[RMDB]
RNA sequence: GGGAACGACUCGAGUAGAGUCGAAAAAGGAUUACGCUGGGCACAACGAAUUCCCAUCCGGGAGCCUACUGAAGCGCGCACGGUAGGCAUCGAUCGGAUGUGGAACUAUUGUGCCUGUGCUGAAGCGCGCACGGCAACCGAAAGGUGCGGAAGUUAACCGCACUAUUGUGUUCGCACAAUAGUGCGGAAAAGAAACAACAACAACAAC
Reactivity to 2A3 in 0.01 (KOAc 150mM, MgCl2 10mM, bicine 150mM(pH8.5), 24C), signal-to-noise 1, nucleotides 027 to 156: a000g110g000a080u210u090a100c020g060c030u000g000g000g000c030a000c000a000a000c000g070a300a300u000u000c000c000c000a000u000c000c000g010g010g000a030g000c030c000u010a000c000u030g080a250a100g040c000g000c000g000c010a000c000g000g010u000a020g000g000c010a020u200c000g000a000u000c000g070g000a010u010g050u300g020g000a000a000c040u000a010u000u000g000u020g000c030c010u000g010u000g000c010u030g110a190a000g000c000g000c000g000c000a000c020g000g000c000a000a000c040c000g000a190a080a040g110g000u030g000c090g010g140a030a010g070u290u300a030a050
The record gives the reactivity of an RNA of 207 nucleotides to 2A3. The RNA was probed in 150 mM KOAc, 10 mM MgCl2 and 150 mM bicine (pH 8.5) at 24 C. For 2A3, 664 sequencing reads were counted. For 2A3 the reverse transcriptase was SuperScript II with manganese.